The data come from the RNA Mapping Database (RMDB), library OK3TST.
This 207-nucleotide RNA was probed chemically with DMS and 2A3.

[RMDB]
RNA sequence: GGGAACGACUCGAGUAGAGUCGAAAAGCAGACGCAGUGUGUGAGGACACUGAAUCUGGCGGGUACUAGACUUCCUCACAAGUCGUCUGUGAUUGUGACCCGAGUCACGAUCACAGUACCGACGUACUCGGGUAUGUCAGACGCCAGCGUCUGAGGACACUUCAUUGUACUUCGGUACAAUGAAGUGAAAAGAAACAACAACAACAAC
Reactivity to DMS in 0.01 (KOAc 150mM, MgCl2 10mM, bicine 150mM(pH8.5), 24C), signal-to-noise 3, nucleotides 027 to 156: g010c010a030g000a040c010g020c000a040g060u000g010u000g020u000g000a140g050g030a150c060a020c010u010g010a060a050u000c010u010g010g020c010g020g020g030u000a100c090u020a160g010a090c050u010u000c010c030u000c030a040c060a120a100g010u010c010g020u010c020u000g010u000g010a010u010u000g020u010g010a020c010c100c260g000a260g010u000c010a020c000g000a010u000c000a030c020a050g020u000a030c140c030g020a020c010g000u000a050c050u010c070g000g040g010u010a060u000g030u000c010a090g020a120c020g020c040c040a070g030c020g000u000c020u000g000a120g000g000a300
Reactivity to 2A3 in 0.01 (KOAc 150mM, MgCl2 10mM, bicine 150mM(pH8.5), 24C), signal-to-noise 5, nucleotides 027 to 156: g090c000a010g000a010c000g000c010a000g000u010g000u010g000u020g030a020g010g000a000c000a010c010u000g050a060a150u150c000u000g010g000c020g010g000g050u170a190c040u070a070g010a020c000u020u000c010c000u020c000a010c020a010a030g010u010c040g030u020c010u000g010u000g000a010u010u020g010u010g000a030c050c110c150g040a100g020u010c000a000c000g000a020u000c000a000c010a000g000u010a050c000c060g000a000c010g010u040a030c040u060c010g120g020g040u160a070u180g030u010c020a020g020a110c020g000c010c000a000g000c010g000u000c000u010g020a040g040g060a010
Conditions: 150 mM KOAc, 10 mM MgCl2 and 150 mM bicine (pH 8.5), 24 C.